[RMDB]
RNA sequence: GGGAACGACUCGAGUAGAGUCGAAAAUUACAGAUCCAGCAAAAUCCAAGAUUAGUAACUACAUUGUGGGGAGGCUGAAUGCAAAUAAUAUUGAGGCUGAUAGUGUGAUGGUGGCCGAAUGUACCAAGCGUAUGUAGCAAUUCGUUGCUACAUACGCAAAAGAAACAACAACAACAAC
Reactivity to 2A3 in 0.01 (KOAc 150mM, MgCl2 10mM, bicine 150mM(pH8.5), 24C), signal-to-noise 1, nucleotides 027 to 126: u160u050a060c040a060g070a130u060c030c010a000g030c040a080a160a000a020u000c030c030a060a000g010a080u030u080a020g110u070a070a040c070u120a030c060a120u040u100g020u070g030g000g000g000a030g060g000c000u010g020a070a060u050g010c030a060a080a000u160a060a030u150a050u090u070g060a060g100g000c040u020g050a040u040a070g090u100g010u020g080a080u050g080g010u000g000g010c000c000g100a010a000u080g020u080a090c060c040a030a010
Reactivity to DMS in 0.01 (KOAc 150mM, MgCl2 10mM, bicine 150mM(pH8.5), 24C), signal-to-noise 2, nucleotides 027 to 126: u000u000a130c090a120g030a120u010c040c020a000g010c080a150a050a080a160u010c030c030a050a070g010a050u000u010a050g040u010a040a060c090u000a100c110a070u010u000g000u010g010g000g010g010a130g020g030c020u020g000a100a040u000g010c050a030a040a060u000a100a060u000a070u000u010g020a130g000g000c030u000g000a060u000a060g000u000g000u010g010a050u000g000g010u010g000g010c030c040g010a070a070u000g010u000a120c040c060a070a120
Structure probing data (2A3 and DMS) for a 177-nucleotide construct. The reactions ran in a buffer of 150 mM KOAc, 10 mM MgCl2 and 150 mM bicine (pH 8.5), at 24 C.